Chemical mapping of a 177-nucleotide RNA with DMS. Reactivities are given for positions 27 through 126. Conditions: 150 mM KOAc, 10 mM MgCl2 and 150 mM bicine (pH 8.5), 24 C. For DMS the reverse transcriptase was MarathonRT.

RNA sequence: GGGAACGACUCGAGUAGAGUCGAAAAGAUAUGGACACAUCGCUGCAUCCAGAUAGGACUUUGAUCAUACUGUCUCGGAAACGAGAUUAUGGGAGUCCGUCUGGAUGCAGCGAUGUGUCCUAAGUCACGUACUUAAUUGCUUCGGCAAUUAAGUACGAAAAGAAACAACAACAACAAC
Reactivity to DMS in 0.01 (KOAc 150mM, MgCl2 10mM, bicine 150mM(pH8.5), 24C), signal-to-noise 1, nucleotides 027 to 126: g000a080u000a300u010g000g050a000c020a050c010a000u000c000g000c000u000g000c000a000u010c000c040a000g000a010u000a080g080g000a000c000u010u010u000g020a110u020c000a020u000a000c300u000g010u000c000u000c000g000g010a120a080a270c000g000a020g000a010u000u000a000u000g000g000g000a030g000u000c000c000g010u010c000u000g000g000a000u000g000c020a010g000c000g030a000u000g000u000g000u020c000c020u000a000a080g000u000c020a240